[RMDB]
RNA sequence: GGGAACGACUCGAGUAGAGUCGAAAACGCGCGCAACUUGCUGCGCUGGGAAUUGAGGAUGCCAAUGCUGUUGACGAGGCCAUCAAGGCUGAGCUUGAGCGUCAGCGAGCAAAUCGCAUUGCUAAGCAGCCAGUUGAUCAUUCGUGAUCAACUGGCUAAAAGAAACAACAACAACAAC
Reactivity to DMS in 0.01 (KOAc 150mM, MgCl2 10mM, bicine 150mM(pH8.5), 24C), signal-to-noise 2, nucleotides 027 to 126: c000g010c000g000c050g020c030a200a130c200u000u000g000c050u010g060c010g010c000u000g000g010g000a160a100u050u030g000a090g000g030a040u000g000c000c000a110a110u000g000c050u080g000u000u000g000a040c060g000a090g000g010c040c040a060u030c160a000a100g060g060c100u030g010a210g020c190u000u000g010a070g000c000g040u020c040a010g070c000g000a060g000c040a060a020a090u030c280g020c000a050u000u000g000c010u020a100a110g000c190
Reactivity to 2A3 in 0.01 (KOAc 150mM, MgCl2 10mM, bicine 150mM(pH8.5), 24C), signal-to-noise 1, nucleotides 027 to 126: c150g000c000g000c000g010c040a060a120c280u080u130g020c100u060g000c030g000c000u000g020g160g040a110a020u080u140g000a140g100g000a040u100g000c030c010a000a000u010g000c030u000g000u050u000g000a000c010g070a090g130g000c050c040a110u100c090a190a000g020g000c070u120g120a040g060c010u150u180g000a000g040c000g000u000c000a000g000c030g060a040g000c000a000a000a150u120c020g000c050a050u070u100g100c070u100a180a000g030c020